[RMDB]
RNA sequence: GGGAACGACUCGAGUAGAGUCGAAAAGGACAUGAAGAACACGACCUGCCAGGACCUACAGAUAGAAGUGACAGUCAAAGGCCACGUCGAGUACACGAGUGAGUGUGGGGGUUGGGAGGCCUUGGGGGCCUCCGGACGUUUUCGAACGUCCGGAGGCAAAAGAAACAACAACAACAAC
Reactivity to DMS in 0.01 (KOAc 150mM, MgCl2 10mM, bicine 150mM(pH8.5), 24C), signal-to-noise 1, nucleotides 027 to 126: g000g000a050c050a080u010g010a180a110g000a060a050c050a080c050g000a070c050c050u000g030c060c050a130g000g000a080c060c020u010a120c110a050g010a180u010a060g000a060a080g040u000g000a050c090a050g050u000c150a060a130a130g020g000c000c070a030c090g000u000c000g000a120g010u010a020c050a030c080g000a100g020u010g000a050g060u000g020u000g030g010g000g030g010u000u000g020g020g000a120g020g010c090c030u000u010g010g000g000g000